[RMDB]
RNA sequence: GGGAACGACUCGAGUAGAGUCGAAAAUAGGCUCGGCGAAAGCAGCGAGAUGAUCACAACCGAUAAAAACCUGUCCACCGACUUGAAUAAAUGCGCUGCACACGAUUGCGACAAGUCCUGCAACAAGACGAGGUGACCUAUUCGUAGGUCACCUCGUAAAAGAAACAACAACAACAAC
Reactivity to 2A3 in 0.01 (KOAc 150mM, MgCl2 10mM, bicine 150mM(pH8.5), 24C), signal-to-noise 3, nucleotides 027 to 126: u150a040g020g010c010u000c010g070g000c040g100a100a090a060g070c120a000g040c010g000a030g030a110u100g010a030u060c010a010c050a260a070c050c060g000a000u170a090a130a100a030a000c000c000u010g030u000c000c020a030c030c000g070a090c090u020u120g020a110a050u160a100a060a050u140g120c030g020c010u080g050c000a000c000a000c040g130a090u040u100g000c030g000a010c000a070a000g030u070c000c030u050g090c020a050a060c060a000a110g070
Reactivity to DMS in 0.01 (KOAc 150mM, MgCl2 10mM, bicine 150mM(pH8.5), 24C), signal-to-noise 1, nucleotides 027 to 126: u000a130g000g000c020u000c050g000g000c000g030a000a170a010g040c010a100g000c000g010a160g000a010u000g170a230u000c030a030c300a150a290c130c010g060a140u000a030a100a050a070a060c020c000u000g000u000c000c000a070c060c050g000a000c030u000u010g020a010a030u040a010a130a140u010g000c140g000c010u000g000c030a060c080a090c010g000a130u000u030g020c000g080a160c010a030a000g000u000c100c030u000g000c170a070a100c190a000a190g060
Structure probing data (2A3 and DMS) for a 177-nucleotide construct. Values are in units of 0.01, from 0 to 300, in steps of 10. The 2A3 profile rests on 1,076 reads. 2A3 adducts were read by reverse transcription with SuperScript II with manganese. The reactions ran in a buffer of 150 mM KOAc, 10 mM MgCl2 and 150 mM bicine (pH 8.5), at 24 C.